The record gives the reactivity of an RNA of 177 nucleotides to DMS. For DMS the reverse transcriptase was MarathonRT. Conditions: 150 mM KOAc, 10 mM MgCl2 and 150 mM bicine (pH 8.5), 24 C. Reactivities are rounded to 0.1 and cut off at 0 and 3. For DMS, 824 sequencing reads were counted.
[RMDB]
RNA sequence: GGGAACGACUCGAGUAGAGUCGAAAAGUGAACCACCAGGAUAGUUUUCUCACGCGGCUGGUGAGGGCCAAACACGUUCAUCGACUUGUGCGUCCCGACUACGUUCAGUUGGCGAUGGAUUUUAGUACAGUCAGUCAGGGUUCGCCCUGACUGACUGAAAAGAAACAACAACAACAAC
Reactivity to DMS in 0.01 (KOAc 150mM, MgCl2 10mM, bicine 150mM(pH8.5), 24C), signal-to-noise 1, nucleotides 027 to 126: g010u010g000a160a160c050c010a050c020c030a080g000g020a140u010a090g010u000u000u000u000c030u020c050a210c070g010c100g000g010c030u020g020g000u000g010a210g020g020g030c000c130a090a080a060c110a050c120g000u010u000c060a030u020c010g000a030c000u000u010g000u010g000c140g000u000c030c050c050g010a040c140u000a110c080g020u000u000c010a060g000u000u010g000g030c120g000a050u000g000g040a100u010u000u000u000a030g010u000a150